[RMDB]
Structure probing data (2A3) for a 207-nucleotide construct. For 2A3, 420 sequencing reads were counted. 2A3 adducts were read by reverse transcription with SuperScript II with manganese.

RNA sequence: GGGAACGACUCGAGUAGAGUCGAAAAGUCUAGGAGUGUGGACAAAUGGUGGAUAACCCCUGCAAAUGCCAACUUAUUGAAAAGGAGUGUUGGAGCCCUCUUUUUCCACCUCAUCAAGCAUACACCUCAAGACAUAAAAGACAGAAUAGUAGGAGGCCGUAAGGGGAGGGUUCGCCCUCCCCUUACGAAAAGAAACAACAACAACAAC
Reactivity to 2A3 in 0.01 (KOAc 150mM, MgCl2 10mM, bicine 150mM(pH8.5), 24C), signal-to-noise 1, nucleotides 027 to 156: g030u000c040u110a080g070g040a000g010u290g020u030g010g030a020c000a060a020a050u150g000g000u030g030g010a010u090a080a020c000c000c000c000u070g020c050a100a080a130u080g110c060c060a000a040c110u280u250a210u220u180g020a090a110a030a090g030g020a060g000u180g010u000u100g040g010a010g010c000c100c000u020c000u040u030u000u020u000c000c010a010c010c010u010c040a040u030c000a000a000g060c040a000u100a130c020a160c000c030u120c150a040a000g050a040c000a030u140a070a250a010a000g040a010c020a000g020a020a020u010a000g050u000a000g000g010a010g010g000c000